[RMDB]
RNA sequence: GGGAACGACUCGAGUAGAGUCGAAAAUCAAAGAAAAAGUGGACACCAGGGUGCCAGAUCCCCAAGAAGGCACUCGCCAGGUAAUGAACAUAGUCUCUUCCUGGCUGUGGAAGGAGCUGGGGAAACGGGUACUACCGGAGUUCGCUCCGGUAGUACCAAAAGAAACAACAACAACAAC
Reactivity to 2A3 in 0.01 (KOAc 150mM, MgCl2 10mM, bicine 150mM(pH8.5), 24C), signal-to-noise 2, nucleotides 027 to 126: u030c010a020a010a020g210a070a130a070a000a000g150u090g020g070a020c030a020c110c000a030g000g020g000u000g000c010c000a000g000a090u100c070c010c000c000a020a020g030a000a080g000g040c000a000c000u000c000g000c020c000a030g060g100u300a130a060u260g050a000a020c110a100u160a030g070u020c010u000c000u080u010c000c000u000g000g000c030u010g010u050g070g010a150a080g020g020a010g000c040u000g000g000g000g020a000a110a010c060g060